[RMDB]
The record gives the reactivity of an RNA of 177 nucleotides to DMS and 2A3. Conditions: 150 mM KOAc, 10 mM MgCl2 and 150 mM bicine (pH 8.5), 24 C.
RNA sequence: GGGAACGACUCGAGUAGAGUCGAAAAGCAAGGGCUGACCGGCAAGGGAAGAAGUUUCCAGUCAUCUUGUGCCACUUCGGUGCGCAGAUGGGCGAGGUGUCCGGUCCCAUGAGUCAAAAGCCGGUAACAUGCUAUGGUGGUUCGCCACCAUAGCAUGAAAAGAAACAACAACAACAAC
Reactivity to DMS in 0.01 (KOAc 150mM, MgCl2 10mM, bicine 150mM(pH8.5), 24C), signal-to-noise 3, nucleotides 027 to 126: g010c110a070a080g010g000g000c020u010g020a030c040c010g020g000c020a110a120g020g000g000a070a040g010a100a110g010u020u000u000c000c010a240g000u040c010a020u000c000u030u030g020u010g000c120c010a010c020u010u060c190g010g000u000g000c000g010c010a020g000a010u000g000g000g030c000g010a090g010g000u000g010u020c030c020g010g010u010c010c010c010a100u060g000a070g010u030c030a080a030a130a100g000c000c000g000g000u000a150a210
Reactivity to 2A3 in 0.01 (KOAc 150mM, MgCl2 10mM, bicine 150mM(pH8.5), 24C), signal-to-noise 4, nucleotides 027 to 126: g100c070a050a110g020g040g020c010u050g070a050c020c010g020g000c050a080a080g100g020g000a030a020g090a100a050g110u030u090u000c000c000a000g060u020c010a000u000c010u090u190g000u030g130c090c020a010c000u030u040c130g050g000u050g040c020g020c010a000g000a030u060g010g030g060c020g070a090g000g040u070g010u000c010c020g020g000u010c000c000c000a060u130g050a010g110u160c070a090a050a000a000g000c000c010g000g000u000a030a050